[RMDB]
RNA sequence: GGGAACGACUCGAGUAGAGUCGAAAAUAUAGGGACCCAAUCUCAAGGCGUGUUGAUAUCAUGGAGAACCCGAGGGUCUUCUUUGGCGUUAUUGUAGUGUCGUCAGGAGGAGUUCUGUCCAACAUGCUGUUUGUUUAUAGUUCGCUAUAAACAAACAAAAAGAAACAACAACAACAAC
Reactivity to 2A3 in 0.01 (KOAc 150mM, MgCl2 10mM, bicine 150mM(pH8.5), 24C), signal-to-noise 3, nucleotides 027 to 126: u300a020u090a060g040g020g070a050c030c010c000a040a120u070c060u020c130a070a100g100g000c030g000u050g020u060u030g040a090u070a050u270c110a070u210g020g080a090g020a110a070c020c020c020g020a060g030g030g050u010c020u060u010c000u160u080u040g000g000c010g050u060u090a110u120u290g140u140a140g100u040g020u130c010g010u010c010a020g050g010a010g000g010a040g040u060u030c030u080g070u060c040c000a000a000c000a010u030g010c000
Reactivity to DMS in 0.01 (KOAc 150mM, MgCl2 10mM, bicine 150mM(pH8.5), 24C), signal-to-noise 6, nucleotides 027 to 126: u020a100u010a120g020g000g000a150c010c020c020a120a160u010c060u010c070a120a130g010g020c020g050u000g010u000u000g000a140u000a080u010c130a070u010g010g000a090g010a070a110c040c040c040g010a090g010g010g010u000c000u000u010c020u010u010u010g010g000c030g020u000u000a070u010u010g010u010a080g020u010g000u000c020g020u000c010a030g000g000a040g010g010a090g000u000u000c010u010g010u000c090c020a030a040c050a030u010g020c070
About this RNA:
An RNA of 177 nucleotides, treated with 2A3 and DMS and read out base by base. Values are in units of 0.01, from 0 to 300, in steps of 10. DMS adducts were read by reverse transcription with MarathonRT. The 2A3 profile rests on 3,437 reads. Conditions: 150 mM KOAc, 10 mM MgCl2 and 150 mM bicine (pH 8.5), 24 C.